[RMDB]
RNA sequence: GGGAACGACUCGAGUAGAGUCGAAAAACCUCAGUCUUCGGACUGAGGUGAGCGGAGCAUGGUGGCCGUGGGAACUGCUCCUUGGUGACAAGGGCCCACGGGGUGCGGCACGCUUCGGCGUGCCGAAGACUUAGAAUUCCUUCGGGAAUUCUAAGUCAAAAGAAACAACAACAACAAC
Reactivity to 2A3 in 0.01 (KOAc 150mM, MgCl2 10mM, bicine 150mM(pH8.5), 24C), signal-to-noise 1, nucleotides 027 to 126: a000c000c010u010c000a010g030u000c020u020u130c180g140g010a000c010u010g000a000g000g000u020g010a050g040c060g040g020a040g020c080a080u120g150g000u060g090g110c030c010g040u020g000g010g010a120a140c140u140g040c030u060c000c010u020u030g080g000u070g020a030c030a020a020g020g020g000c010c000c000a000c020g000g000g030g020u080g050c020g030g070c000a000c010g020c000u040u010c110g090g020c040g010u020g000c000c000g020a010a000
Reactivity to DMS in 0.01 (KOAc 150mM, MgCl2 10mM, bicine 150mM(pH8.5), 24C), signal-to-noise 2, nucleotides 027 to 126: a030c000c000u000c000a020g010u000c000u010u020c200g010g000a020c000u000g010a000g000g000u000g000a050g040c090g010g000a080g020c060a070u010g010g010u010g010g000c030c000g010u000g000g000g010a100a090c090u000g000c070u000c010c000u010u010g000g010u010g010a200c050a020a020g000g000g010c020c000c000a010c020g000g000g010g030u000g010c010g000g000c000a010c000g020c010u010u010c130g010g000c010g030u000g010c000c000g000a020a060